[RMDB]
RNA sequence: GGGAACGACUCGAGUAGAGUCGAAAAGGGUCCCUGAGAGUCCAUUCUCCAGAAGAGGAGACGGACUGAGCCUGAGAGGAGAAGGGGAAUAUCCCUAGGGAAAUUUGGAGGCGAAGGGCGAGCCUCCCUAAGGUCGUAACUUCGGUUACGACCUUAGAAAAGAAACAACAACAACAAC
Reactivity to 2A3 in 0.01 (KOAc 150mM, MgCl2 10mM, bicine 150mM(pH8.5), 24C), signal-to-noise 1, nucleotides 027 to 126: g060g020g000u030c070c010c000u020g070a200g020a000g000u040c010c040a120u190u080c000u010c040c000a150g030a300a000g130a300g110g010a000g000a000c000g020g000a010c010u010g030a030g010c030c100u170g150a130g050a050g120g000a060g040a050a080g030g000g030g020a110a000u100a080u220c000c000c050u000a050g020g000g000a130a110a100u240u120u100g010g010a010g000g000c000g000a040a030g030g000g000c020g010a000g000c000c010u040c010c020
Reactivity to DMS in 0.01 (KOAc 150mM, MgCl2 10mM, bicine 150mM(pH8.5), 24C), signal-to-noise 2, nucleotides 027 to 126: g000g000g000u000c020c000c020u000g010a190g030a080g010u020c000c010a190u020u000c010u000c000c000a170g000a250a240g010a200g020g000a020g010a070c300g000g000a020c020u010g000a090g020c040c020u000g000a110g020a140g010g020a070g000a120a160g000g000g000g030a100a160u020a100u000c000c000c010u000a170g000g010g000a080a080a150u000u000u020g020g010a020g000g010c010g010a060a130g000g000g030c070g000a140g020c000c000u000c020c020
Chemical mapping of a 177-nucleotide RNA with 2A3 and DMS. Conditions: 150 mM KOAc, 10 mM MgCl2 and 150 mM bicine (pH 8.5), 24 C. For 2A3 the reverse transcriptase was SuperScript II with manganese. The 2A3 profile rests on 803 reads. The data come from the RNA Mapping Database (RMDB), library VIROID.